[RMDB]
RNA sequence: GGGAACGACUCGAGUAGAGUCGAAAAUUCCCCUUCGACCUCUCCUCGACUCGGAUUGGCUCAUCCCCAGGUCGAGGCGAGGGUCCUCAGUUCUCUCUAUUCUUUCCUUCUUGAAAGAGGAGACUGCUGGACCAAACGCCCGAGCCGGGAUGGGCCGGUAAGUAGAUGCGUUCGCGCAUCUACUUACAAAAGAAACAACAACAACAAC
Reactivity to 2A3 in 0.01 (KOAc 150mM, MgCl2 10mM, bicine 150mM(pH8.5), 24C), signal-to-noise 1, nucleotides 027 to 156: u060u060c000c010c010c010u000u030c000g030a030c000c050u000c000u040c010c010u010c010g000a010c010u000c030g090g040a140u040u190g000g000c000u020c010a000u000c040c020c050c100a100g030g030u040c020g030a180g000g000c000g010a020g000g010g000u000c010c000u010c010a100g010u300u020c030u010c020u000c010u090a240u300u040c010u080u000u050c040c040u160u300c090u140u300g000a010a000a000g010a000g010g020a020g010a000c000u040g030c060u010g000g020a000c000c000a170a300a050c010g000c000c010c000g040a050g060c000c000g010g000g010a000u000g000g000g000c000c000g000